[RMDB]
RNA sequence: GGGAACGACUCGAGUAGAGUCGAAAAGCAGCCUCUGCACUCACGCCGCCCCCGCACGCACAGCGCACCUGGCGCCGUCUGCCCUCCGCAGCGCUCGCCCCUUUCUCUGGGAGGACAACCUGCUGACCACUUGUACUAAUUUCGAUUAGUACAAGUGAAAAGAAACAACAACAACAAC
Reactivity to 2A3 in 0.01 (KOAc 150mM, MgCl2 10mM, bicine 150mM(pH8.5), 24C), signal-to-noise 5, nucleotides 027 to 126: g030c030a020g030c020c010u060c040u080g000c050a060c040u060c010a040c060g030c010c010g030c020c010c000c000c000g020c010a050c020g030c000a050c020a050g020c030g000c020a050c030c040u050g050g000c020g000c010c010g040u020c020u040g030c000c000c010u040c020c020g010c020a020g010c010g020c020u030c020g030c010c000c010c000u020u110u030c060u000c030u040g040g010g000a040g020g010a020c010a030a040c010c010u040g020c010u020g040a030c020
Reactivity to DMS in 0.01 (KOAc 150mM, MgCl2 10mM, bicine 150mM(pH8.5), 24C), signal-to-noise 9, nucleotides 027 to 126: g010c060a080g010c040c020u000c040u000g020c060a100c060u000c070a080c110g010c030c040g010c030c020c010c020c030g020c070a060c090g020c070a080c080a070g010c050g020c060a080c090c050u000g010g010c040g020c090c030g010u010c050u000g010c020c020c020u000c040c030g010c040a050g010c070g010c040u000c060g000c020c020c020c040u000u000u000c030u000c040u000g010g000g010a070g010g010a070c060a040a090c070c030u000g010c030u000g010a220c140
Annotation:
The data come from the RNA Mapping Database (RMDB), library OK2TRN. This 177-nucleotide RNA was probed chemically with 2A3 and DMS. Values are in units of 0.01, from 0 to 300, in steps of 10. For DMS, 49,519 sequencing reads were counted. The 2A3 profile rests on 26,974 reads.